[RMDB]
RNA sequence: GGGAACGACUCGAGUAGAGUCGAAAAUGAUCGGAACAUACAAUGAUUCUUGCUAAGACCGAUUCACAGUUUUUCUUUUUUUUCGAUCGAAGAAAUACUGGAGAAGCCUAAAGAAGGAGUCUAAAAAAUAUGUACGUUACUUCGGUAACGUACAUAUAAAAGAAACAACAACAACAAC
Reactivity to DMS in 0.01 (KOAc 150mM, MgCl2 10mM, bicine 150mM(pH8.5), 24C), signal-to-noise 2, nucleotides 027 to 126: u000g030a030u000c010g020g010a100a120c300a090u000a080c220a110a090u010g010a050u000u010c040u000u000g010c060u010a160a080g000a030c010c030g000a170u010u000c060a100c040a030g000u000u000u010u000u000c010u000u000u000u000u000u000u000u000c080g010a040u000c080g000a010a000g000a020a000a000u000a010c010u000g000g030a140g010a080a070g000c030c030u000a060a060a100g020a070a030g010g010a060g000u000c000u000a010a030a040a070a090
Reactivity to 2A3 in 0.01 (KOAc 150mM, MgCl2 10mM, bicine 150mM(pH8.5), 24C), signal-to-noise 2, nucleotides 027 to 126: u050g010a000u010c000g000g010a090a030c000a070u300a110c100a100a110u160g000a050u060u040c020u000u070g050c060u120a040a000g010a040c000c040g020a020u090u070c070a050c000a040g020u000u010u010u020u050c010u160u080u000u020u030u020u090u140c110g050a100u040c040g000a020a010g000a000a000a000u010a020c000u020g030g030a180g040a180a040g070c000c050u100a140a110a040g040a030a010g030g010a000g020u010c060u130a160a090a000a020a040
An RNA of 177 nucleotides, treated with DMS and 2A3 and read out base by base. Conditions: 150 mM KOAc, 10 mM MgCl2 and 150 mM bicine (pH 8.5), 24 C. For 2A3 the reverse transcriptase was SuperScript II with manganese. For 2A3, 1,443 sequencing reads were counted. The data come from the RNA Mapping Database (RMDB), library OK2TST.